Chemical mapping of a 177-nucleotide RNA with 2A3 and DMS.
The 2A3 profile rests on 3,260 reads.
High DMS reactivity at an A or C suggests that its Watson-Crick edge is free.
For DMS, 5,071 sequencing reads were counted.
RNA sequence: GGGAACGACUCGAGUAGAGUCGAAAAACUAAAGUACCAAAGUGUUCUUGAUCUAGUUAGAAGAAUAGUUAAAAGGACUGGAAUAGAAUUUACAUCACAUAUGCUUCGCCACACUCACGCAACGCAGUAUUCAAGACGGUUUCGACCGUCUUGAAUAAAAAGAAACAACAACAACAAC
Reactivity to 2A3 in 0.01 (KOAc 150mM, MgCl2 10mM, bicine 150mM(pH8.5), 24C), signal-to-noise 5, nucleotides 027 to 126: a000c090u170a110a060a030g090u070a100c020c060a080a120a110g180u170g030u020u010c030u030u090g110a160u010c010u030a020g100u170u190a090g070a160a020g060a170a110u070a090g100u110u160a080a210a000a000g050g020a010c050u020g030g080a070a060u080a120g070a040a030u080u080u120a080c040a100u080c020a070c030a040u080a020u160g030c020u050u090c030g010c010c000a040c000a000c010u020c010a010c030g020c010a040a030c010g000c020a050g050
Reactivity to DMS in 0.01 (KOAc 150mM, MgCl2 10mM, bicine 150mM(pH8.5), 24C), signal-to-noise 4, nucleotides 027 to 126: a090c130u040a050a060a070g020u010a110c000c040a080a100a080g030u020g020u020u000c010u000u020g010a140u010c030u010a040g010u020u020a090g020a090a050g010a060a060u010a070g010u020u020a050a090a110a110g010g000a000c050u020g000g040a060a110u030a040g000a050a090u010u040u010a070c080a050u000c070a040c080a050u010a020u000g010c030u000u000c030g000c000c020a030c060a040c040u010c040a040c090g050c100a050a050c070g000c030a090g000